[RMDB]
RNA sequence: GGGAACGACUCGAGUAGAGUCGAAAAUUUCAAAUGGGGAAAUGAGGUCGGGAGCAGAGGAGCUGCACGUUCGAGGUGCGCCCCAGCCGGCUGGCCAGUGCUGGACAGACGCCAGGUACUGUGAUUCAUAACUCACAAUGUUCGCAUUGUGAGUUAUAAAAGAAACAACAACAACAAC
Reactivity to DMS in 0.01 (KOAc 150mM, MgCl2 10mM, bicine 150mM(pH8.5), 24C), signal-to-noise 5, nucleotides 027 to 126: u010u010u010c050a060a080a110u000g010g000g010g010a060a080a070u000g010a120g010g010u010c060g030g000g000a090g010c100a110g020a100g020g020a060g010c020u010g020c020a030c040g010u000u010c240g010a140g020g010u010g020c030g000c040c020c010c030a110g000c040c030g010g010c040u010g010g010c040c020a050g010u000g010c030u000g000g000a080c070a120g000a110c150g000c020c030a030g000g020u000a030c050u000g000u000g000a110u010u000c130
Reactivity to 2A3 in 0.01 (KOAc 150mM, MgCl2 10mM, bicine 150mM(pH8.5), 24C), signal-to-noise 2, nucleotides 027 to 126: u020u040u060c070a070a080a090u130g020g000g040g030a000a080a090u180g050a150g080g050u070c050g030g040g010a060g030c080a030g060a130g070g030a130g010c050u080g030c090a010c040g120u160u120c100g060a060g140g000u020g000c010g020c010c000c000c000a030g030c010c000g010g000c010u050g040g020c020c000a020g000u050g000c020u020g010g000a030c000a080g090a060c060g010c010c000a060g040g000u000a030c030u050g000u040g080a050u070u060c030

Structure probing data (DMS and 2A3) for a 177-nucleotide construct. The 2A3 profile rests on 1,967 reads.